[RMDB]
RNA sequence: GGGAACGACUCGAGUAGAGUCGAAAAAGAUCCACGCUACGGCGUGGAUCACACGUUCAUCCCUAUUGGGACGGAAGUAGGCAUAGUGCCGAAGGAACGCAAUAGUCAUGCGCUACGGCGCAUGACACACAUCAGAGUCACUUCGGUGACUCUGAAACUCUUCGAUGUACUUCGGUACAUCGAAGAGAAAAGAAACAACAACAACAAC
Reactivity to 2A3 in 0.01 (KOAc 150mM, MgCl2 10mM, bicine 150mM(pH8.5), 24C), signal-to-noise 2, nucleotides 027 to 156: a000g010a000u000c000c020a020c010g000c000u010a030c290g170g000c000g000u000g010g000a000u010c000a000c010a000c010g040u040u010c010a020u030c000c020c010u080a300u110u300g000g000g000a010c040g000g030a020a030g020u040a010g000g000c050a060u140a270g130u130g170c020c000g010a000a000g030g020a030a020c010g000c060a070a050u050a120g000u000c000a000u000g010c000g000c010u000a030c170g110g000c000g030c000a010u000g000a000c000a000c010a000c000a120u030c000a000g030a000g000u000c000a000c010u060u180c300g160g000u000g000a000c000u000c000u010g010a000a000a000